[RMDB]
Overview
The record gives the reactivity of an RNA of 170 nucleotides to DMS and 2A3. Source: RMDB library 15KLIB, as collected in RNAgym. The RNA was probed in 150 mM KOAc, 10 mM MgCl2 and 150 mM bicine (pH 8.5) at 24 C. DMS adducts were read by reverse transcription with MarathonRT. For 2A3 the reverse transcriptase was SuperScript II with manganese. For DMS, 51,391 sequencing reads were counted.
RNA sequence: GGGAACGACUCGAGUAGAGUCGAAAAGUUCCCCUGAUGUCCAGUCCCUCCCCGCUCCUGGAGAAGGGAGACUCGGGAACGCCUAGCAUCUGAGGGACAAAGCCGCCCCCGGGCGCUCCCCUCGGAGAAACCUAGAUCUUCGGAUCUAGGAAAAGAAACAACAACAACAAC
Reactivity to DMS in 0.01 (KOAc 150mM, MgCl2 10mM, bicine 150mM(pH8.5), 24C), signal-to-noise 9, nucleotides 027 to 129: g010u000u000c000c010c020c160u010g030a110u050g000u000c010c050a060g020u000c000c010c000u000c010c000c010c050g000c050u010c010c010u000g030g040a130g040a130a120g030g020g020a030g020a150c040u000c080g020g010g010a060a050c140g040c020c030u010a060g000c130a080u030c020u020g000a030g000g000g000a010c000a110a100a060g030c070c060g020c010c020c000c100c170g030g000g040c020g010c020u020c040c000c010c010u010c030g000g000a010g010a070a050a130
Reactivity to 2A3 in 0.01 (KOAc 150mM, MgCl2 10mM, bicine 150mM(pH8.5), 24C), signal-to-noise 9, nucleotides 027 to 129: g010u010u010c000c000c000c020u060g070a070u170g100u040c040c020a030g040u000c000c000c000u010c010c000c000c000g040c020u090c030c040u110g070g050a140g040a120a080g020g010g000a010g010a010c010u010c020g010g000g010a030a020c020g020c020c020u040a040g040c030a070u000c010u010g000a010g010g010g000a020c050a070a050a010g060c090c050g010c020c010c000c020c040g040g010g000c020g010c000u010c000c000c000c000u000c000g000g000a020g010a020a020a000